[RMDB]
RNA sequence: GGGAACGACUCGAGUAGAGUCGAAAAUCAACACAAUUCAGAUCAACAUUGUAAAUAACGCGUUACAACUGAAUGUUAAUAAUAACGUGCUAAACUUAGCUAACUCAUCUAAAGUUAUCGGUAUAGACCAUACCGUCAUCUUCGGAUGACGGUAUGGAAAAGAAACAACAACAACAAC
Reactivity to DMS in 0.01 (KOAc 150mM, MgCl2 10mM, bicine 150mM(pH8.5), 24C), signal-to-noise 2, nucleotides 027 to 126: u020c060a140a110c130a030c050a070a030u000u010c020a040g000a130u030c070a020a130c150a200u020u000g010u000a030a020a050u000a140a050c080g010c080g030u010u000a020c060a020a090c040u040g010a030a020u000g030u000u010a110a030u020a060a050u020a060a040c060g040u000g000c020u000a050a110a030c070u010u010a040g020c080u000a030a030c040u000c010a080u000c130u000a020a050a080g000u010u000a030u000c040g030g000u000a050u000a090g020a080
Reactivity to 2A3 in 0.01 (KOAc 150mM, MgCl2 10mM, bicine 150mM(pH8.5), 24C), signal-to-noise 3, nucleotides 027 to 126: u040c020a010a050c030a000c030a080a090u040u020c010a020g070a090u080c030a040a110c010a070u080u080g010u070a050a030a080u100a070a000c040g030c030g070u020u030a000c000a050a090c020u070g080a070a000u100g040u100u140a040a070u130a120a060u040a090a020c040g030u010g000c020u070a040a080a060c050u020u060a000g010c000u040a030a000c000u030c050a160u010c070u120a090a070a070g050u070u040a070u100c040g020g020u040a020u030a140g110a070